The record gives the reactivity of an RNA of 207 nucleotides to 2A3 and DMS. The reactions ran in a buffer of 150 mM KOAc, 10 mM MgCl2 and 150 mM bicine (pH 8.5), at 24 C.
RNA sequence: GGGAACGACUCGAGUAGAGUCGAAAAGGGGUCUCAAAAAUGCGUCCUUGUCAGUCCAGGUGGCUGAAGCCUCCACGGCCAUAUUGGGACUUGGAUUUAGGACGCGCCAAUGAGACGGAGGCACCCAAACUGACUACGCCUUCGGGCGUAGUCAGAACAACAACUGUAUCUUCGGAUACAGUUGUUGAAAAGAAACAACAACAACAAC
Reactivity to 2A3 in 0.01 (KOAc 150mM, MgCl2 10mM, bicine 150mM(pH8.5), 24C), signal-to-noise 5, nucleotides 027 to 156: g080g010g020g010u020c010u000c020a070a070a030a010a020u130g010c000g000u000c000c010u050u040g110u140c110a080g000u000c000c000a030g070g020u010g010g000c000u020g010a110a030g040c000c020u020c020c010a020c010g010g000c000c020a030u110a270u160u240g160g000g000a030c050u060u180g140g020a080u230u130u140a020g000g000a000c000g000c000g000c000c010a050a100u090g000a000g000a000c010g000g000a000g010g010c020a070c010c010c000a030a080a080c000u000g000a000c000u000a000c000g000c000c000u040u100c290g060g010g000c000g000u000a000g000u000c000a000g000a000a010
Reactivity to DMS in 0.01 (KOAc 150mM, MgCl2 10mM, bicine 150mM(pH8.5), 24C), signal-to-noise 2, nucleotides 027 to 156: g000g020g030g040u000c010u000c010a010a090a080a120a130u000g010c020g000u000c010c000u010u010g000u010c000a070g000u020c000c000a170g020g060u000g010g000c000u000g010a040a210g020c000c020u000c010c010a300c010g010g000c000c010a030u000a100u000u010g020g030g000a060c050u010u000g030g020a080u000u010u000a030g000g010a040c000g010c000g000c100c080a060a130u000g010a070g000a090c030g010g020a040g040g010c010a090c000c010c000a090a070a200c020u000g010a010c000u000a010c010g000c000c010u000u010c300g050g030g000c010g000u000a010g000u000c010a000g000a070a230
Background:
DMS adducts were read by reverse transcription with MarathonRT. Source: RMDB library RNAMAK, as collected in RNAgym. The DMS profile rests on 5,834 reads.